Record summary
An RNA of 177 nucleotides, treated with DMS and read out base by base. The reactions ran in a buffer of 150 mM KOAc, 10 mM MgCl2 and 150 mM bicine (pH 8.5), at 24 C. Source: RMDB library TTRDEL, as collected in RNAgym.
[RMDB]
RNA sequence: GGGAACGACUCGAGUAGAGUCGAAAAGAUAUGGAGACGUUCAACAGCUACACCUGUCGGAAACGACAGUUGUAGACAUGAACAACUCCUAAGUCAAAAUCUAGUCGGCGUUCGCGCCGACUAGAAACGUUGUUGAAACGUUCGCGUUUCAACAACGAAAAGAAACAACAACAACAAC
Reactivity to DMS in 0.01 (KOAc 150mM, MgCl2 10mM, bicine 150mM(pH8.5), 24C), signal-to-noise 1, nucleotides 027 to 126: g000a030u030a300u010g010g000a000g010a090c300g050u000u000c000a000a200c300a280g000c000u000a000c000a010c010c000u000g040u030c000g000g000a010a110a120c000g000a000c030a030g000u000u000g000u000a010g000a000c170a250u000g000a000a000c000a280a300c000u000c000c000u000a070a130g030u000c010a180a040a030a230u000c000u000a000g010u000c010g010g040c000g070u000u050c280g040c000g000c000c000g000a000c000u000a000g000a050a030a050